[RMDB]
RNA sequence: GGGAACGACUCGAGUAGAGUCGAAAAUUUUGUCGUGAAUCUUGAUCGACGAAUUGAGUUUACCUGCGUUGAUUGUAAAGGCCGACAUAUAUAAAACAUGACACUACUGUUCGUACUUGUUUAGUACUAUCGUGCACAGAUUCGUCUGUGCACGAUAAAAAGAAACAACAACAACAAC
Reactivity to DMS in 0.01 (KOAc 150mM, MgCl2 10mM, bicine 150mM(pH8.5), 24C), signal-to-noise 2, nucleotides 027 to 126: u020u000u000u000g000u000c010g000u000g000a040a050u020c060u000u000g000a050u000c000g010a000c000g000a030a050u000u060g010a100g010u030u010u020a150c170c020u010g010c040g000u000u000g000a030u000u000g010u010a070a040a040g000g020c000c000g000a020c010a010u030a030u000a070u030a090a110a080a140c130a130u010g000a060c060a120c030u020a000c020u000g000u020u000c040g010u020a040c120u000u000g030u000u010u000a030g020u010a080c170
Reactivity to 2A3 in 0.01 (KOAc 150mM, MgCl2 10mM, bicine 150mM(pH8.5), 24C), signal-to-noise 2, nucleotides 027 to 126: u000u000u000u050g010u000c050g000u030g300a110a300u080c080u070u140g000a000u000c000g000a080c090g000a170a290u170u070g150a140g040u160u150u210a120c000c000u000g000c050g010u080u020g010a080u000u030g040u150a110a000a160g020g070c060c000g000a000c010a010u070a010u010a000u000a000a150a010a000c100a050u240g020a030c000a000c060u090a060c000u010g010u110u000c050g000u000a030c000u020u090g060u060u050u030a000g050u010a000c000

An RNA of 177 nucleotides, treated with DMS and 2A3 and read out base by base. Values cover nucleotides 27 to 126. DMS adducts were read by reverse transcription with MarathonRT. The 2A3 profile rests on 379 reads. The reactions ran in a buffer of 150 mM KOAc, 10 mM MgCl2 and 150 mM bicine (pH 8.5), at 24 C.